RNA sequence: GGGAACGACUCGAGUAGAGUCGAAAAAGCAGUCGAUUCGUCGACUGCUAAUGGGUCGGGACUACAUCACAGGUUCUUCGCUAGCCCUCUUUGGACCUGUAAAAAAGAGCUUAUUCGUAAGCUCUAACGCAUAAGUCAAAUUCGUUUGACUUAUGCGAAAAGAAACAACAACAACAAC
Reactivity to 2A3 in 0.01 (KOAc 150mM, MgCl2 10mM, bicine 150mM(pH8.5), 24C), signal-to-noise 3, nucleotides 027 to 126: a000g000c010a000g000u000c000g010a020u040u090c120g070u000c000g100a040c010u000g010c000u000a010a040u090g020g000g010u080c030g000g010g040a030c030u110a030c090a120u200c090a010c010a010g000g000u010u000c000u030u050c020g000c050u040a100g010c020c000c000u000c020u050u020u030g010g010a020c000c000u000g070u090a050a050a010a010a010a010g010a000g000c010u010u020a030u060u100c170g050u010a000a010g000c000u030c010u010a030a000
Reactivity to DMS in 0.01 (KOAc 150mM, MgCl2 10mM, bicine 150mM(pH8.5), 24C), signal-to-noise 3, nucleotides 027 to 126: a010g010c010a000g010u000c000g000a030u000u000c210g000u000c010g010a010c000u000g010c000u000a010a030u000g000g010g010u010c070g000g000g020a270c050u000a070c210a070u000c160a030c020a020g000g010u010u000c010u010u000c070g020c080u000a130g010c010c020c010u000c020u000u000u000g010g010a020c020c010u010g000u000a010a070a070a040a040a040g000a020g000c000u000u000a030u000u000c160g000u000a010a010g000c000u000c000u010a010a080
Chemical mapping of a 177-nucleotide RNA with 2A3 and DMS. Conditions: 150 mM KOAc, 10 mM MgCl2 and 150 mM bicine (pH 8.5), 24 C. DMS (dimethyl sulfate) methylates the pairing face of unpaired adenines and cytosines. 2A3 adducts were read by reverse transcription with SuperScript II with manganese. For 2A3, 7,055 sequencing reads were counted. 2A3 is a SHAPE reagent: it acylates the 2'-hydroxyl of flexible nucleotides of all four kinds.